[RMDB]
RNA sequence: GGGAACGACUCGAGUAGAGUCGAAAAGGGGUCAAGCUCUUUGAUCGUCCAAACAGCCGAGGAUCGUACUGAAGCCUCCACGGUACGGGAGGCUGUGGACGGGAGAGCUUGACGGAGGCACCCAAAACGAUAAUAGAGGUUCGCCUCUAUUAUCGAACGACACCUAUUGAUUCGUCAAUAGGUGUCGAAAAGAAACAACAACAACAAC
Reactivity to 2A3 in 0.01 (KOAc 150mM, MgCl2 10mM, bicine 150mM(pH8.5), 24C), signal-to-noise 3, nucleotides 027 to 156: g020g010g150g020u000c000a000a000g000c000u050c010u300u240u040g010a000u010c000g010u000c000c000a230a300a270c010a020g020c000c000g030a280g050g000a000u000c000g010u000a000c000u040g060a130a020g010c000c010u000c000c000a000c000g000g000u000a000c000g000g000g010a010g010g020c000u010g010u000g000g000a000c010g010g010g000a020g000a000g000c000u000u000g000a000c000g000g010a000g000g010c000a040c000c000c000a030a050a000a050c020g000a000u000a000a010u000a000g010a010g000g060u110u130c230g150c050c000u000c000u000a000u000u000a000u010c000g000a010a000
The data come from the RNA Mapping Database (RMDB), library RNAMAK. The record gives the reactivity of an RNA of 207 nucleotides to 2A3. The reactions ran in a buffer of 150 mM KOAc, 10 mM MgCl2 and 150 mM bicine (pH 8.5), at 24 C.